[RMDB]
RNA sequence: GGGAACGACUCGAGUAGAGUCGAAAAUGGUAAUCAGCGAUUCCUAUAGCCGUUCUUGUAAUUGUGGGAACAUAAUUAGGAUCUUCUAAUGGAUUGUAUGGCUUGAUAGCAUCAUCUUUAUCAGGAUGGACAACCUUAAUUGGUUGGUCCUCAUCUCCGAUUAAGACGUUUUCGAACGUCUUAAUCGAAAAGAAACAACAACAACAAC
Reactivity to 2A3 in 0.01 (KOAc 150mM, MgCl2 10mM, bicine 150mM(pH8.5), 24C), signal-to-noise 9, nucleotides 027 to 156: u080g020g020u080a060a050u130c040a030g070c020g060a050u100u110c010c010u030a030u060a060g040c060c050g030u020u010c040u060u120g160u140a120a150u100u100g010u080g030g020g020a040a030c010a040u110a090a060u080u020a020g030g010a030u010c020u120u020c060u150a080a090u090g020g020a050u050u110g070u190a070u080g090g010c010u040u090g070a040u100a100g040c010a020u060c010a010u020c060u030u100u050a100u090c050a030g100g010a040u090g020g000a020c000a010a000c000c000u070u150a100a080u280u030g010g010u000u010g040g110u000c000c010u010c010a040u010c010u000c010
Reactivity to DMS in 0.01 (KOAc 150mM, MgCl2 10mM, bicine 150mM(pH8.5), 24C), signal-to-noise 3, nucleotides 027 to 156: u010g000g030u000a080a060u000c030a110g020c050g020a050u000u010c000c010u000a230u000a060g030c010c030g040u000u000c030u000u000g020u000a050a060u000u000g050u000g010g010g050a170a220c070a040u000a050a080u010u000a070g030g020a050u000c040u010u010c060u000a080a130u010g020g000a050u000u000g040u010a080u000g010g020c000u010u010g010a080u000a050g010c130a210u000c070a070u000c050u000u000u010a050u000c030a050g000g000a120u000g010g000a140c010a010a010c010c000u000u020a080a190u000u010g030g030u000u000g010g000u010c010c020u000c060a090u010c030u000c040